[RMDB]
RNA sequence: GGGAACGACUCGAGUAGAGUCGAAAAGAUAUGGACUGGUGGACAUGCGAAAGGUUCGGAAACGAACCGAUCGCAACAGCCACUGGUCCUAAGUCAAAACUAAGGAUUACUUCGGUAAUCCUUAGAAGAAAUAAACGGUGUUCGCACCGUUUAUUUCAAAAGAAACAACAACAACAAC
Reactivity to 2A3 in 0.01 (KOAc 150mM, MgCl2 10mM, bicine 150mM(pH8.5), 24C), signal-to-noise 2, nucleotides 027 to 126: g000a010u070a030u080g000g010a000c010u000g010g000u000g000g010a060c090a270u300g000c000g000a010a010a000g000g010u000u000c000g020g030a080a030a020c000g000a000a030c010c000g000a020u000c000g000c010a010a010c040a010g040c000c000a000c000u000g010g000u020c000c000u010a020a000g030u010c020a000a020a100a160c000u000a010a000g000g000a010u000u020a000c010u030u160c300g080g000u010a010a000u010c000c000u010u000a000g000a000a020
Reactivity to DMS in 0.01 (KOAc 150mM, MgCl2 10mM, bicine 150mM(pH8.5), 24C), signal-to-noise 3, nucleotides 027 to 126: g010a050u000a300u000g000g010a000c000u000g000g010u010g000g010a060c070a240u010g000c000g010a000a070a300g000g000u000u000c010g000g000a080a050a140c010g020a000a000c000c000g000a080u000c000g010c010a030a030c250a120g000c010c000a010c000u000g000g010u010c000c010u000a010a060g010u000c040a070a100a110a210c010u010a010a000g000g000a000u000u000a000c000u000u000c170g020g000u000a000a020u000c000c000u000u000a010g000a050a080